[RMDB]
RNA sequence: GGGAACGACUCGAGUAGAGUCGAAAAGAUAUGGAAGCUAUCCAGACAUGCUGUGGGAUCGGAAACGAUCCCUCCAGCAACAGCUGGUAAGGCUUCCUAAGUCAAAAGACGUCGUUCGCGACGUCAACACGGUACCAACGUUCGCGUUGGUACCGUGAAAAGAAACAACAACAACAAC
Reactivity to DMS in 0.01 (KOAc 150mM, MgCl2 10mM, bicine 150mM(pH8.5), 24C), signal-to-noise 2, nucleotides 027 to 126: g000a030u000a300u000g000g000a000a010g020c000u000a300u000c000c000a030g000a040c100a300u000g010c000u000g010u000g000g030g050a000u000c000g010g010a030a030a060c000g000a030u010c010c000c000u010c260c060a000g010c010a040a110c230a150g050c010u010g010g010u020a110a160g000g000c030u000u000c000c000u000a010a080g000u040c030a120a060a150a100g000a040c030g030u000c000g000u000u030c150g050c020g030a000c010g020u010c010a020a110
Reactivity to 2A3 in 0.01 (KOAc 150mM, MgCl2 10mM, bicine 150mM(pH8.5), 24C), signal-to-noise 1, nucleotides 027 to 126: g000a000u060a020u090g010g000a050a000g000c010u060a050u100c000c010a000g080a080c090a280u300g010c000u000g030u040g010g000g010a010u000c000g000g000a010a000a030c020g000a010u010c000c000c000u000c030c020a000g000c010a010a040c030a000g060c010u020g030g020u170a300a190g230g000c000u020u000c000c000u000a030a000g050u020c010a060a060a010a120g020a000c000g000u000c000g000u010u110c300g000c000g160a010c000g000u000c020a000a030
This 177-nucleotide RNA was probed chemically with DMS and 2A3. The 2A3 profile rests on 2,585 reads. The RNA was probed in 150 mM KOAc, 10 mM MgCl2 and 150 mM bicine (pH 8.5) at 24 C. 2A3 adducts were read by reverse transcription with SuperScript II with manganese.